[RMDB]
RNA sequence: GGGAACGACUCGAGUAGAGUCGAAAAAAAGUGAUCAAUCAUUAAUCUUACCAUUAUCACCAUAUGCAAUAGAUAAAUAUUACGGCGAACGGACGACAUUAAAUUAUUGCUCGUUAUAUAACAUACCGGACUGAGUUAUUUUCGAAUAACUCAGUCCAAAAGAAACAACAACAACAAC
Reactivity to 2A3 in 0.01 (KOAc 150mM, MgCl2 10mM, bicine 150mM(pH8.5), 24C), signal-to-noise 4, nucleotides 027 to 126: a010a010a010g140u100g020a120u150c070a050a010u050c030a050u030u120a110a060u010c050u060u070a050c010c040a020u040u050a040u120c030a040c070c020a060u080a050u210g020c010a000a150u060a070g170a030u090a140a100a000u230a080u170u140a050c100g040g030c030g050a060a020c030g040g080a000c010g040a020c050a030u120u150a140a200a050u180u100a040u070u060g040c030u000c010g050u040u100a050u010a000u000a150a020c050a040u070a110c010c090
Reactivity to DMS in 0.01 (KOAc 150mM, MgCl2 10mM, bicine 150mM(pH8.5), 24C), signal-to-noise 2, nucleotides 027 to 126: a050a040a060g030u010g000a050u000c060a000a150u060c100a080u010u010a080a050u000c110u000u000a080c080c040a040u000u000a070u020c040a040c010c160a050u020a030u000g000c120a090a050u050a020g010a180u010a040a050a030u000a090u060u070a080c060g000g000c010g000a110a020c080g000g000a070c000g000a020c100a030u010u030a140a010a010u030u030a060u060u000g020c000u020c040g000u060u000a080u060a040u000a110a130c050a020u020a020c200c300